[RMDB]
This 177-nucleotide RNA was probed chemically with 2A3 and DMS.
RNA sequence: GGGAACGACUCGAGUAGAGUCGAAAAGUCGAAGAAGGCGCCGACGGCCUCCUUACCUUUGAUGCCGCUGCCAUCGGGAUUGGUGACGGACUUGCCGAUCGGAUCCUCGAUGACGACGUCGUCGGCCCCAUAAGGCUGGGUUCGCCCAGCCUUAUGGAAAAGAAACAACAACAACAAC
Reactivity to 2A3 in 0.01 (KOAc 150mM, MgCl2 10mM, bicine 150mM(pH8.5), 24C), signal-to-noise 2, nucleotides 027 to 126: g040u020c030g050a040a040g020a030a020g080g000c030g020c060c040g030a030c000g000g040c010c010u020c000c010u080u070a110c010c000u120u060u130g080a060u110g090c000c010g060c060u100g000c060c000a010u020c020g060g000g020a030u050u070g090g060u080g070a050c100g030g010a080c100u180u200g070c040c000g110a250u040c020g080g000a010u000c000c000u060c060g010a010u030g030a020c020g000a020c040g040u070c000g020u000c020g050g050c000c020
Reactivity to DMS in 0.01 (KOAc 150mM, MgCl2 10mM, bicine 150mM(pH8.5), 24C), signal-to-noise 2, nucleotides 027 to 126: g000u000c090g000a070a050g010a060a050g000g010c150g020c030c020g020a040c080g000g000c010c140u010c030c020u000u010a060c100c060u010u000u000g020a090u000g010c070c030g040c120u010g010c030c010a000u010c020g000g010g010a040u000u000g000g000u000g000a160c230g000g000a200c280u000u020g010c020c010g000a100u000c010g020g000a030u000c020c010u000c030g010a050u010g010a020c030g000a080c100g000u010c020g000u010c000g000g000c140c040
For 2A3 the reverse transcriptase was SuperScript II with manganese. It was measured as part of the RMDB library OK2TRN. For DMS the reverse transcriptase was MarathonRT.